[RMDB]
RNA sequence: GGGAACGACUCGAGUAGAGUCGAAAAUGAUGGUAGUGAUCCUAGGGAUGCUAGGUCCACCAUUGAAGAUAUUUUAUUUGAUAAAGUAACAACUGUAGGUCUUGGCACGGUUGAUGCAGACUAUGACACCUCACACUUAUUUCGAUAAGUGUGAGGUAAAAGAAACAACAACAACAAC
Reactivity to DMS in 0.01 (KOAc 150mM, MgCl2 10mM, bicine 150mM(pH8.5), 24C), signal-to-noise 4, nucleotides 027 to 126: u010g010a010u000g000g020u010a060g050u030g010a020u020c010c000u010a010g010g030g040a170u010g020c020u000a000g010g010u000c010c010a060c010c020a010u000u000g010a090a140g000a140u000a010u000u000u000u000a030u010u010u010g000a080u000a030a030a030g000u010a040a090c060a060a080c100u000g010u010a090g000g010u000c030u000u010g010g020c010a030c040g030g010u000u010g000a100u000g010c010a060g010a060c040u000a080u010g010a130c230
Reactivity to 2A3 in 0.01 (KOAc 150mM, MgCl2 10mM, bicine 150mM(pH8.5), 24C), signal-to-noise 3, nucleotides 027 to 126: u190g010a030u030g040g050u070a280g010u050g190a090u210c010c000u020a030g050g080g070a130u220g270c010u020a010g010g000u000c010c010a020c010c000a000u000u000g060a000a030g040a040u040a120u080u140u070u030a180u080u150u130g080a080u100a130a070a040g080u040a100a000c040a050a020c090u090g060u130a020g000g080u050c030u050u110g100g000c040a030c080g070g000u080u090g000a010u040g050c030a000g000a050c050u060a080u170g030a030c060